[RMDB]
Chemical mapping of a 177-nucleotide RNA with 2A3 and DMS. The 2A3 profile rests on 1,509 reads. The reactions ran in a buffer of 150 mM KOAc, 10 mM MgCl2 and 150 mM bicine (pH 8.5), at 24 C. 2A3 adducts were read by reverse transcription with SuperScript II with manganese. Source: RMDB library OK2TST, as collected in RNAgym. DMS adducts were read by reverse transcription with MarathonRT.
RNA sequence: GGGAACGACUCGAGUAGAGUCGAAAACGGAGUUUCAUAGAGUUCUCUAGGGCUACCAAUCUGCUGGAUUUCCCCCAUCGACAUCAGCACGAUACGAUCGGCCAUGGUCAUUGCUUCAACUUGGUCGGUACACGUGAGAUUUCGAUCUCACGUGUACAAAAGAAACAACAACAACAAC
Reactivity to 2A3 in 0.01 (KOAc 150mM, MgCl2 10mM, bicine 150mM(pH8.5), 24C), signal-to-noise 2, nucleotides 027 to 126: c010g020g000a020g000u070u190u190c120a110u180a050g040a040g080u230u000c060u000c000u110a050g000g000g000c020u080a150c040c010a030a030u000c020u050g020c030u040g020g100a130u060u040u070c010c000c000c020c000a100u060c060g080a060c010a060u090c000a000g040c050a000c040g000a020u070a050c040g070a070u080c010g010g000c000c020a020u030g010g020u060c070a110u070u160g040c030u050u090c010a020a060c020u020u000g000g000u010c060g000
Reactivity to DMS in 0.01 (KOAc 150mM, MgCl2 10mM, bicine 150mM(pH8.5), 24C), signal-to-noise 2, nucleotides 027 to 126: c130g000g000a100g000u000u010u000c030a130u000a120g010a080g000u010u010c060u010c030u010a100g000g010g030c010u000a070c070c040a090a090u000c070u010g020c050u000g000g010a140u000u000u000c000c010c010c170c070a040u000c080g020a040c100a040u010c020a060g010c070a080c140g000a080u000a100c190g000a000u010c020g010g010c010c010a030u000g000g020u010c050a070u000u010g010c090u010u000c080a080a070c040u020u000g020g010u000c000g010